[RMDB]
RNA sequence: GGGAACGACUCGAGUAGAGUCGAAAAUCUUCCCAAUCUGACCUGACCCCUCCCCCAGCGGGUCGCCCAGGAAUGGCGGGACCCCACUUCAGCAGGGUCCGCGUUCCAUCCUUUCUUACCUGAUGGCAAAUCGACCUGUUCGCAGGUCGAAAAAGAAACAACAACAACAAC
Reactivity to DMS in 0.01 (KOAc 150mM, MgCl2 10mM, bicine 150mM(pH8.5), 24C), signal-to-noise 4, nucleotides 027 to 129: u000c190u030u040c030c010c040a170a060u100c050u020g040a000c000c000u020g000a240c050c050c000c040u020c000c000c020c020c090a070g040c120g000g000g000u040c020g010c060c010c030a080g000g090a000a000u050g040g060c010g060g100g010a000c030c000c030c000a130c100u080u030c230a170g040c150a190g000g000g000u010c000c040g040c020g010u040u000c010c050a120u050c060c040u040u040u080c030u070u010a170c000c130u070g010a070u040g010g050c090a050a100a180
Reactivity to 2A3 in 0.01 (KOAc 150mM, MgCl2 10mM, bicine 150mM(pH8.5), 24C), signal-to-noise 4, nucleotides 027 to 129: u040c010u000u020c000c000c000a000a050u070c100u110g070a030c000c000u030g150a100c010c000c000c000u020c020c000c000c000c000a030g020c010g020g010g000u010c010g020c010c000c000a020g020g010a050a070u020g290g160c000g040g030g010a000c000c000c010c010a080c060u230u200c040a090g000c020a050g010g000g020u000c010c010g050c000g030u060u030c000c010a040u030c020c000u100u120u050c040u010u020a050c010c000u040g050a030u080g090g000c010a010a030a040